The record gives the reactivity of an RNA of 177 nucleotides to 2A3 and DMS. For 2A3 the reverse transcriptase was SuperScript II with manganese. The data come from the RNA Mapping Database (RMDB), libraries RFM100 and RFMREP.
[RMDB]
RNA sequence: GGGAACGACUCGAGUAGAGUCGAAAAGCAUCUGGCUCCACACGAUCAUCCAGUACAUUUCACCACAUUGUCUGCAGCUCACCUCGCAGGAAUCACUUCGGUGAGCGAGGGCUGUUCGACUCCACGCCCUUCGUCUUAUUUUCGAAUAAGACGAAGGAAAAGAAACAACAACAACAAC
Reactivity to 2A3 in 0.01 (KOAc 150mM, MgCl2 10mM, bicine 150mM(pH8.5), 24C), signal-to-noise 9, nucleotides 027 to 126: g040c020a070u060c030u070g030g000c010u020c030c010a040c010a020c050g040a070u060c010a030u010c030c010a010g040u060a050c030a120u050u060u070c080a090c060c000a040c030a090u040u150g010u020c010u010g000c010a010g000c010u040c060a130c010c010u010c010g010c010a050g080g230a060a090u060c010a010c050u040u050c130g090g000u010g000a010g000c000g000a020g000g020g000c000u010g020u020u050c040g010a010c000u010c030c010a060c050g060c000
Reactivity to DMS in 0.01 (KOAc 150mM, MgCl2 10mM, bicine 150mM(pH8.5), 24C), signal-to-noise 6, nucleotides 027 to 126: g020c060a040u010c040u010g010g000c040u000c020c030a060c070a110c070g000a060u010c060a060u010c030c050a060g010u000a070c100a090u000u010u000c040a100c030c040a060c130a050u010u000g020u000c020u010g000c030a060g030c030u010c130a240c050c020u000c030g010c020a170g000g020a110a200u010c070a020c050u000u010c130g020g010u000g010a020g000c020g000a030g010g000g010c020u010g000u000u000c300g010a040c010u000c070c040a060c110g010c140